Chemical mapping of a 177-nucleotide RNA with DMS.
RNA sequence: GGGAACGACUCGAGUAGAGUCGAAAAGAUAUGGAGCUCCCCCACUAAUACUACCCACCUGUACCCAGCCACUUCGGAAACGAAGUGACAGCUGGUACAGAGGUAUUAGUGGGGGAGCUCCUAAGUCCUUAUACGCUAUGUUCGCAUAGCGUAUAAGAAAAGAAACAACAACAACAAC
Reactivity to DMS in 0.01 (KOAc 150mM, MgCl2 10mM, bicine 150mM(pH8.5), 24C), signal-to-noise 4, nucleotides 027 to 126: g000a130u010a280u000g000g010a010g030c010u000c000c000c010c010c000a020c010u000a010a010u000a000c010u000a050c060c050c190a300c190c000u010g000u010a010c130c040c080a230g040c000c010a010c000u000u000c000g000g010a100a090a170c000g030a000a000g020u000g020a050c120a060g060c110u000g010g000u000a000c000a000g000a070g010g000u000a000u000u010a010g020u000g020g000g010g000g000a010g000c010u000c000c000u000a000a090g010u000c020